[RMDB]
RNA sequence: GGGAACGACUCGAGUAGAGUCGAAAAUACAUGUCAGGAACAGUUACUGACGUAAUAACGGGUGAGUCCAUCAUAAGCGUUGACGCUCCCUACGGGUGGACUGUGGAGAGACAGGGCACUGCUAAGGCCCAAAUCUCAGCCAUGCAUCGAGGGGUACCCCUCUAUUAACGUUCGCGUUAAUAGAGGGAAAAGAAACAACAACAACAAC
Reactivity to DMS in 0.01 (KOAc 150mM, MgCl2 10mM, bicine 150mM(pH8.5), 24C), signal-to-noise 3, nucleotides 027 to 156: u000a090c050a070u010g010u000c000a040g010g010a150a300c040a170g020u000u010a160c010u020g000a030c030g020u000a070a100u010a050a080c060g020g030g050u000g000a070g020u000c000c010a040u000c040a110u010a110a100g010c020g020u010u000g000a120c070g010c020u000c020c010c010u000a110c070g000g000g040u000g010g010a010c020u000g050u000g010g000a300g020a050g030a040c030a300g000g000g050c020a100c060u000g030c210u010a110a110g000g030c010c020c030a020a040a080u000c020u000c000a120g040c020c040a090u000g000c060a070u010c040g000a100g020g000g030g040u000a100c100
Reactivity to 2A3 in 0.01 (KOAc 150mM, MgCl2 10mM, bicine 150mM(pH8.5), 24C), signal-to-noise 5, nucleotides 027 to 156: u120a010c040a040u110g000u010c020a010g050g100a170a140c040a090g050u140u220a030c020u000g010a000c000g000u040a040a070u100a140a020c090g030g040g020u070g060a020g030u010c030c020a020u020c020a040u080a210a080g040c030g050u040u040g060a070c070g040c040u070c010c030c010u030a020c060g050g000g000u020g000g020a020c030u020g030u030g030g030a030g000a010g000a030c080a110g030g000g010c040a070c280u150g030c090u170a110a110g050g000c000c000c000a020a060a030u020c020u000c000a000g030c010c010a010u070g010c010a040u060c050g030a040g030g010g000g010u090a070c000
An RNA of 207 nucleotides, treated with DMS and 2A3 and read out base by base. The data come from the RNA Mapping Database (RMDB), library PDB130. Conditions: 150 mM KOAc, 10 mM MgCl2 and 150 mM bicine (pH 8.5), 24 C. 2A3 adducts were read by reverse transcription with SuperScript II with manganese.